[RMDB]
RNA sequence: GGGAACGACUCGAGUAGAGUCGAAAAGAUAUGGAUUCAGCACCAUACGUGUACGUAGGGAGAUCUGGGUCGGAAACGACCCUGAUCAUCGAUCUACGGUACACGUAUGGUGCUGAAUCCUAAGUCAGUGUAUCCAUUAGUUCGCUAAUGGAUACACAAAAGAAACAACAACAACAAC
Reactivity to DMS in 0.01 (KOAc 150mM, MgCl2 10mM, bicine 150mM(pH8.5), 24C), signal-to-noise 3, nucleotides 027 to 126: g000a070u000a300u000g000g010a000u000u000c010a000g000c000a020c000c000a010u000a010c000g030u000g030u000a010c000g000u000a010g000g010g000a020g020a000u000c010u000g000g010g020u000c000g010g010a120a100a230c000g010a020c000c000c000u000g000a010u000c020a240u010c220g010a070u010c000u000a010c000g010g020u000a000c000a010c000g000u000a000u000g000g000u000g000c010u010g000a010a000u000c000c000u000a000a090g010u000c080a140